This 177-nucleotide RNA was probed chemically with 2A3. Values are in units of 0.01, from 0 to 300, in steps of 10. Conditions: 150 mM KOAc, 10 mM MgCl2 and 150 mM bicine (pH 8.5), 24 C. The data come from the RNA Mapping Database (RMDB), library OK1LIB. 2A3 adducts were read by reverse transcription with SuperScript II with manganese.

RNA sequence: GGGAACGACUCGAGUAGAGUCGAAAAGUACCACCAUUUUCUCUUUCUUUUUUAAAUAGGACCAUUGCUUCGUCCCAUAAUUUUUUAGUAUUUUCAGUGGCACCAGCUAAGAAAGAGUCAUUUCCCUACGCUAUGGCUGAUUCGUCAGCCAUAGCGUAAAAGAAACAACAACAACAAC
Reactivity to 2A3 in 0.01 (KOAc 150mM, MgCl2 10mM, bicine 150mM(pH8.5), 24C), signal-to-noise 3, nucleotides 027 to 126: g000u000a150c010c000a040c080c080a140u130u000u300u000c020u010c040u000u000u030c040u010u140u140u070u040u190a060a120a020u100a080g070g000a030c000c010a080u020u110g030c020u050u040c030g080u080c060c000c000a100u130a120a210u100u040u030u020u040u260a000g020u070a250u030u080u060u100c050a020g020u090g050g080c150a150c020c000a040g080c060u090a070a000g000a050a060a000g010a000g000u000c000a000u120u080u000c000c000c040u000